Chemical mapping of a 177-nucleotide RNA with DMS and 2A3. The data come from the RNA Mapping Database (RMDB), library RFM100. Reactivities are rounded to 0.1 and cut off at 0 and 3. The DMS profile rests on 1,083 reads. For 2A3 the reverse transcriptase was SuperScript II with manganese.

RNA sequence: GGGAACGACUCGAGUAGAGUCGAAAACGAAAUGGAGCGAUUUGACCCGUCUUGAAACACGGACCAAGGAGUCUAACAUGUGUGCAAGUGUUAGGGUGUGGAAACCCCAGCGCGAAAUGAAAGUGAAGGACAUUCUUGUGUUCGCACAAGAAUGUCCAAAAGAAACAACAACAACAAC
Reactivity to DMS in 0.01 (KOAc 150mM, MgCl2 10mM, bicine 150mM(pH8.5), 24C), signal-to-noise 1, nucleotides 027 to 126: c000g010a080a170a090u000g010g000a060g000c030g020a110u010u080u020g010a030c030c000c170g000u000c000u000u020g040a300a130a000c170a060c030g010g030a000c000c060a020a080g000g000a060g000u020c030u010a000a130c120a130u020g030u110g000u030g000c010a020a130g000u020g070u060u000a090g000g000g060u000g030u010g000g000a100a110a060c020c020c000c030a020g010c030g000c000g000a170a090a080u030g020a030a070a200g000u030g020a110a100
Reactivity to 2A3 in 0.01 (KOAc 150mM, MgCl2 10mM, bicine 150mM(pH8.5), 24C), signal-to-noise 2, nucleotides 027 to 126: c010g030a000a000a030u120g050g000a080g010c010g180a150u040u050u110g170a150c000c000c090g000u000c000u020u050g120a090a050a000c030a070c030g030g010a000c130c020a040a110g030g000a120g110u030c060u040a130a040c000a000u120g040u030g020u130g030c040a040a000g010u020g000u050u040a100g030g000g000u080g010u060g080g030a100a090a140c000c000c000c000a000g000c010g030c000g040a050a040a050u170g010a030a000a010g050u090g040a120a040